[RMDB]
RNA sequence: GGGAACGACUCGAGUAGAGUCGAAAACAGAUGACCUUAACAUAGGCACUGACUUGAAUUUCUUUGCAGUAAGUGCUACAUGUUGGGGUAGUCUUGAAACGAGAGUAAUACUUCGGUAUUACUCUCGCCAGAUAAGCGAGUUCGCUCGCUUAUCUGGAAAAGAAACAACAACAACAAC
Reactivity to DMS in 0.01 (KOAc 150mM, MgCl2 10mM, bicine 150mM(pH8.5), 24C), signal-to-noise 1, nucleotides 027 to 126: c100a050g000a020u000g000a070c010c000u000u000a000a000c000a020u000a240g010g000c000a020c030u000g000a020c010u000u000g020a020a040u020u040u010c230u000u000u030g030c040a020g030u000a000a000g020u000g000c000u000a140c170a030u000g000u000u000g000g000g010g030u000a010g000u000c000u010u010g000a080a120a300c040g010a010g010a010g010u000a000a000u000a000c000u000u010c200g010g010u000a010u000u000a000c000u000c000u010c000g020
Reactivity to 2A3 in 0.01 (KOAc 150mM, MgCl2 10mM, bicine 150mM(pH8.5), 24C), signal-to-noise 3, nucleotides 027 to 126: c050a000g020a030u020g040a020c010c000u010u020a010a010c000a000u020a050g000g030c010a000c000u000g050a020c010u040u160g060a080a130u300u250u230c160u180u220u280g060c010a000g000u040a060a010g010u010g040c010u090a050c050a080u000g000u000u010g020g000g010g010u010a010g000u010c020u030u160g110a170a110a000c040g000a000g000a000g010u010a010a000u010a000c000u040u070c230g050g010u010a000u000u000a000c000u020c000u000c000g000

An RNA of 177 nucleotides, treated with DMS and 2A3 and read out base by base. For 2A3 the reverse transcriptase was SuperScript II with manganese. The DMS profile rests on 1,442 reads. It was measured as part of the RMDB library RFMREP.